[RMDB]
RNA sequence: GGGAACGACUCGAGUAGAGUCGAAAACGGUUGAGGGUUUCUUCGUAGAGGUUGAUCGAUUCUUAAUGUCCUGUGGAUUUUAAGUUCCCAAAACUGUUGCUUAGGACAUACAAGAUCGUUCAAUGUCGUUGACACUCUUGUUCGCAAGAGUGUCAACAAAAGAAACAACAACAACAAC
Reactivity to 2A3 in 0.01 (KOAc 150mM, MgCl2 10mM, bicine 150mM(pH8.5), 24C), signal-to-noise 2, nucleotides 027 to 126: c000g020g010u000u010g010a050g000g030g030u000u000u000c000u050u040c030g030u060a010g000a090g100g020u000u000g020a030u000c000g000a020u300u050c010u010u040a040a000u020g010u010c000c010u030g000u100g080g000a070u030u010u090u210a020a030g000u000u030c030c070c030a000a010a000a090c120u110g070u220u200g030c020u010u120a000g000g000a000c000a000u060a060c060a020a000g000a010u000c000g020u000u000c000a000a000u130g050u220c120